[RMDB]
RNA sequence: GGGAACGACUCGAGUAGAGUCGAAAAUACCCCACCUGGAAUCUACUAAUGGCAAGUGGAUGUACUACUUGACAAAAUCUUAAGAAUCUUGGACACUUUUCAAGGGUGGGGAUGAUGUUCAAAAGGGCGUCCCUAUUAAGUUCGCUUAAUAGGGACGAAAAGAAACAACAACAACAAC
Reactivity to DMS in 0.01 (KOAc 150mM, MgCl2 10mM, bicine 150mM(pH8.5), 24C), signal-to-noise 3, nucleotides 027 to 126: u000a120c020c000c000c020a010c010c010u000g030g030a160a080u020c050u020a060c200u000a130a140u010g010g010c040a020a010g030u000g010g000a210u020g000u020a170c040u000a020c030u000u010g000a040c040a040a060a080a080u000c090u000u000a100a100g010a100a070u000c070u000u000g000g000a050c070a080c090u000u000u000u000c090a070a090g020g000g000u000g010g000g010g020a010u000g000a060u030g000u000u000c040a040a050a070a110g000g010g010
Reactivity to 2A3 in 0.01 (KOAc 150mM, MgCl2 10mM, bicine 150mM(pH8.5), 24C), signal-to-noise 3, nucleotides 027 to 126: u050a020c000c000c010c010a000c000c000u010g050g070a050a070u060c020u120a130c040u110a200a140u050g120g000c020a030a010g010u010g010g030a080u200g040u100a090c000u010a000c000u020u010g000a000c010a000a150a000a030u090c100u120u160a100a070g060a090a070u080c080u040u030g050g000a010c020a070c070u090u200u150u130c050a100a070g070g000g010u000g000g020g030g000a010u110g030a020u050g040u060u040c030a090a060a010a040g020g120g040
The record gives the reactivity of an RNA of 177 nucleotides to DMS and 2A3. Conditions: 150 mM KOAc, 10 mM MgCl2 and 150 mM bicine (pH 8.5), 24 C. 2A3 is a SHAPE reagent: it acylates the 2'-hydroxyl of flexible nucleotides of all four kinds. The DMS profile rests on 2,229 reads.